This 207-nucleotide RNA was probed chemically with 2A3. As a SHAPE reagent, 2A3 marks flexible, mostly unpaired nucleotides at the ribose 2'-OH.
[RMDB]
RNA sequence: GGGAACGACUCGAGUAGAGUCGAAAAGUCGCAAGACCUCCCGGCUGCAAGGUAAUUUACAUCGGCUGGUUCUGCGUCGGGCACCUUGGCGCAGGAUGAGAUUCAAGGAUGCUGGCUUCCCGUUUAGCGUGCCACUGCGCGACUCGGGCGGUGAGACGAAGAACGUAGGGUUCGCCCUACGUUCUUCAAAAGAAACAACAACAACAAC
Reactivity to 2A3 in 0.01 (KOAc 150mM, MgCl2 10mM, bicine 150mM(pH8.5), 24C), signal-to-noise 2, nucleotides 027 to 156: g020u010c020g030c110a040a110g030a030c010c000u050c000c000c000g040g000c010u060g010c050a110a100g070g040u130a130a170u160u230u190a100c080a100u290c060g000g000c030u070g000g000u030u020c010u000g010c000g020u000c020g030g000g000c010a030c000c010u000u020g000g000c020g010c010a000g000g030a020u060g030a000g020a030u210u180c030a050a020g010g000a010u010g020c000u000g020g030c000u000u000c000c000c030g000u050u060u050a010g010c000g000u020g070c070c090a170c170u160g000c010g010c000g010a030c010u000c050g020g010g000c020g000g010u050g010a050g020a020c060